[RMDB]
RNA sequence: GGGAACGACUCGAGUAGAGUCGAAAACUCUUUUACUCGGCAUGAUACCACCGUUAUCGGGUCAACAGAGUAGUUGCAAAUGACAACAAUGCUCAGGGUUAUUCUCUCGCUGCCUAAUGGCGGUGCGCGGACGACUCAAUGUUCGCAUUGAGUCGAAGAUGUGGUUGACGUUCGCGUCAACCACAUCAAAAGAAACAACAACAACAAC
Reactivity to 2A3 in 0.01 (KOAc 150mM, MgCl2 10mM, bicine 150mM(pH8.5), 24C), signal-to-noise 2, nucleotides 027 to 156: c010u030c000u000u060u070u070a070c050u010c050g000g020c070a020u000g030a010u060a110c060c000a050c040c000g080u100u080a040u110c020g000g000g020u000c060a040a030c060a010g020a000g030u100a030g010u000u080g000c020a040a260a300u260g070a140c030a070a030c010a070a030u070g000c000u000c010a030g010g000g000u020u000a100u190u000c030u000c000u050c030g000c000u010g000c000c020u180a300a140u250g000g000c020g010g000u010g020c160g000c020g020g120a110c000g000a000c000u000c000a000a000u000g000u030u040c210g000c140a000u000u000g000a000g000u000c000g000a000a050

The record gives the reactivity of an RNA of 207 nucleotides to 2A3. The RNA was probed in 150 mM KOAc, 10 mM MgCl2 and 150 mM bicine (pH 8.5) at 24 C.